Chemical mapping of a 177-nucleotide RNA with 2A3 and DMS. DMS adducts were read by reverse transcription with MarathonRT. The data come from the RNA Mapping Database (RMDB), library VIROID.
[RMDB]
RNA sequence: GGGAACGACUCGAGUAGAGUCGAAAAUGGGCAACAUUCCGAGGGGGCCGUCCCCUCGUAAUGGCAGAUGGGACCCAGGCUUCCCCCGGAUUCCCUUAUGGGAAUCGAGGAGAAAAAGUGGCUCUCCCUCCAAGGAUUAGUUCGCUAAUCCUUGGAGAAAAGAAACAACAACAACAAC
Reactivity to 2A3 in 0.01 (KOAc 150mM, MgCl2 10mM, bicine 150mM(pH8.5), 24C), signal-to-noise 2, nucleotides 027 to 126: u020g000g000g000c010a050a000c000a030u020u050c040c000g000a000g080g000g020g010g040c160c090g230u300c030c000c000c000u020c000g000u000a020a000u030g040g030c100a060g050a300u100g010g010g100a100c000c010c020a050g150g080c060u020u030c000c000c000c000c010g030g000a000u000u010c010c020c000u090u150a240u300g020g000g040a000a000u010c010g010a030g040g010a090g090a060a140a050a020a010g080u130g030g030c000u010c000u050c030c000
Reactivity to DMS in 0.01 (KOAc 150mM, MgCl2 10mM, bicine 150mM(pH8.5), 24C), signal-to-noise 2, nucleotides 027 to 126: u000g000g010g030c070a160a100c000a030u000u010c030c000g010a050g010g010g000g010g020c250c300g020u010c000c000c000c010u010c000g000u000a010a020u000g010g010c120a100g010a160u000g010g000g000a170c020c040c010a050g080g000c200u010u000c010c000c000c060c040g020g020a000u000u000c000c000c000u000u010a110u000g020g010g000a000a000u000c010g000a070g010g000a070g000a030a060a080a080a120g000u000g000g010c000u000c040u000c040c050